[RMDB]
RNA sequence: GGGAACGACUCGAGUAGAGUCGAAAACAUUCGCGAUUUCAGGAGUCACUUAACGGACAGCGUGACAAUCGUUCGUGACGAAGGUGUACCGCGAAUUCAAGCACUUGCCACAUUGCUUUCGUCGAGGCGACUCAUCGACUUUCGAGUCGAUGAGUCGAAAAGAAACAACAACAACAAC
Reactivity to DMS in 0.01 (KOAc 150mM, MgCl2 10mM, bicine 150mM(pH8.5), 24C), signal-to-noise 2, nucleotides 027 to 126: c100a140u000u010c000g000c000g000a020u000u000u000c090a010g000g000a300g000u000c000a020c030u010u000a030a060c000g010g000a290c060a160g000c090g000u020g000a060c140a040a110u020c010g010u000u000c300g000u030g000a010c020g030a300a080g030g040u020g030u030a120c050c020g000c000g000a000a100u000u050c020a030a040g000c050a100c080u020u000g050c050c030a020c130a080u030u070g000c000u010u000u010c080g000u000c050g010a040g000g000
Reactivity to 2A3 in 0.01 (KOAc 150mM, MgCl2 10mM, bicine 150mM(pH8.5), 24C), signal-to-noise 4, nucleotides 027 to 126: c030a010u030u010c010g000c000g040a050u090u270u140c010a040g040g040a050g060u020c000a000c030u090u110a090a000c040g050g110a060c040a060g010c060g070u040g100a050c040a080a120u080c020g050u050u020c070g000u020g040a020c020g020a080a010g120g060u060g000u040a070c020c000g010c010g020a020a020u090u130c060a030a000g020c030a020c010u030u060g010c010c010a020c000a080u010u120g030c000u000u060u090c000g080u000c010g010a030g020g000